Chemical mapping of a 177-nucleotide RNA with 2A3 and DMS. The 2A3 profile rests on 7,604 reads. Conditions: 150 mM KOAc, 10 mM MgCl2 and 150 mM bicine (pH 8.5), 24 C. For DMS the reverse transcriptase was MarathonRT. Source: RMDB library RFMREP, as collected in RNAgym.
RNA sequence: GGGAACGACUCGAGUAGAGUCGAAAACUUCCAGUGGAUCGAAGGCACGCCGCGAGGCGCCCCGACGAUUCGCCGAGAAGCCUCUGUUCGAAAUCAUCGGGAGUGAUCCAGAUGACGGUCCUGCCAUUAUGUAAUUAUGCUUCGGCAUAAUUACAUAAAAAGAAACAACAACAACAAC
Reactivity to 2A3 in 0.01 (KOAc 150mM, MgCl2 10mM, bicine 150mM(pH8.5), 24C), signal-to-noise 3, nucleotides 027 to 126: c000u010u010c000c000a000g000u020g020g000a010u010c010g010a030a020g000g010c020a010c010g000c010c000g020c050g030a060g000g000c000g010c020c010c000c000g020a020c000g000a010u020u040c010g000c010c070g090a180g010a040a000g020c010c000u000c010u020g020u020u010c000g010a020a050a140u020c000a010u000c000g020g020g000a030g020u100g030a090u000c010c010a010g000a030u010g010a020c010g000g000u000c000c010u020g080c070c010a160u060
Reactivity to DMS in 0.01 (KOAc 150mM, MgCl2 10mM, bicine 150mM(pH8.5), 24C), signal-to-noise 3, nucleotides 027 to 126: c040u000u000c000c010a060g000u000g020g000a020u010c010g000a090a300g010g020c300a090c030g000c000c010g030c300g010a220g010g020c000g000c050c300c000c000g010a280c000g010a020u000u020c000g030c000c000g000a260g000a000a020g040c070c000u020c010u000g000u000u000c020g000a020a120a300u000c000a010u000c000g010g010g000a020g010u020g000a190u000c020c000a050g010a020u000g000a080c060g010g010u000c000c010u000g010c070c100a160u020